[RMDB]
Structure probing data (DMS and 2A3) for a 177-nucleotide construct. For DMS the reverse transcriptase was MarathonRT.
RNA sequence: GGGAACGACUCGAGUAGAGUCGAAAAUUUUCAUUGGUUUAUCACAUAGCAUACUAAUUGAUUCAAAUAAUGAUUCAUAUUGUACAGGAGAUAAUACUUAUGGACAAUUAGGUUCGUUUUUUGAUGAACUAGUAGCUAUAUUCGUAUAGCUACUAGUAAAAGAAACAACAACAACAAC
Reactivity to DMS in 0.01 (KOAc 150mM, MgCl2 10mM, bicine 150mM(pH8.5), 24C), signal-to-noise 5, nucleotides 027 to 126: u010u000u010u010c020a030u000u010g000g010u000u000u000a010u000c030a110c080a170u030a110g010c180a150u010a020c020u030a040a070u030u000g000a020u000u000c010a030a080a100u030a130a090u020g000a010u000u000c010a070u020a040u030u000g000u000a010c070a130g010g010a090g020a010u010a030a020u040a030c010u000u010a010u000g000g010a000c170a010a030u020u020a070g000g000u000u000c120g030u000u000u000u010u000u020g000a100u020g010a090
Reactivity to 2A3 in 0.01 (KOAc 150mM, MgCl2 10mM, bicine 150mM(pH8.5), 24C), signal-to-noise 9, nucleotides 027 to 126: u040u030u020u030c010a020u010u050g030g020u040u030u030a030u030c030a040c080a160u160a060g120c050a060u030a100c040u160a080a110u070u030g030a010u020u010c020a040a110a170u270a140a150u180g030a030u000u040c020a010u030a050u170u080g010u020a020c040a060g070g120a140g080a060u030a050a030u100a110c000u010u020a000u020g010g000a010c070a040a150u060u040a120g050g040u030u060c050g000u010u030u010u010u040u050g150a170u060g020a040
For 2A3, 8,013 sequencing reads were counted. The DMS profile rests on 11,734 reads.